[RMDB]
RNA sequence: GGGAACGACUCGAGUAGAGUCGAAAACGCCGUCGCCGCGCUGGUGAUGGCCGCGGUCUUCUACGAGGCGACGAUCAAACGCCGCGCGCGAAACCGGCUGACCGAACUGACGAUCUCGCAGGUCGAGUGACUAAAUGACUUUCGAGUCAUUUAGUCAAAAAGAAACAACAACAACAAC
Reactivity to 2A3 in 0.01 (KOAc 150mM, MgCl2 10mM, bicine 150mM(pH8.5), 24C), signal-to-noise 4, nucleotides 027 to 126: c050g000c010c010g020u030c010g010c140c010g020c020g010c110u130g010g010u050g010a090u050g010g020c000c010g010c020g030g050u010c030u090u000c080u160a090c130g020a010g020g000c060g100a110c030g020a080u040c060a100a200a080c030g000c020c000g010c000g000c000g000c010g010a060a030a050c080c020g020g000c010u030g030a040c000c010g030a110a050c040u100g070a080c030g040a100u030c050u050c080g050c050a050g030g040u020c000g020a050g080
Reactivity to DMS in 0.01 (KOAc 150mM, MgCl2 10mM, bicine 150mM(pH8.5), 24C), signal-to-noise 7, nucleotides 027 to 126: c200g010c000c000g020u000c030g000c150c040g020c060g030c060u010g050g020u000g010a230u000g010g010c030c020g030c040g010g000u010c030u000u000c090u010a140c210g010a050g010g010c010g000a030c020g010a030u010c080a040a140a160c110g020c020c000g010c030g010c020g000c080g000a030a140a110c230c040g000g000c010u000g010a190c060c010g010a070a100c110u000g010a100c060g010a080u000c040u000c130g010c140a130g010g000u000c020g010a120g000
An RNA of 177 nucleotides, treated with 2A3 and DMS and read out base by base. For DMS the reverse transcriptase was MarathonRT. The DMS profile rests on 8,535 reads.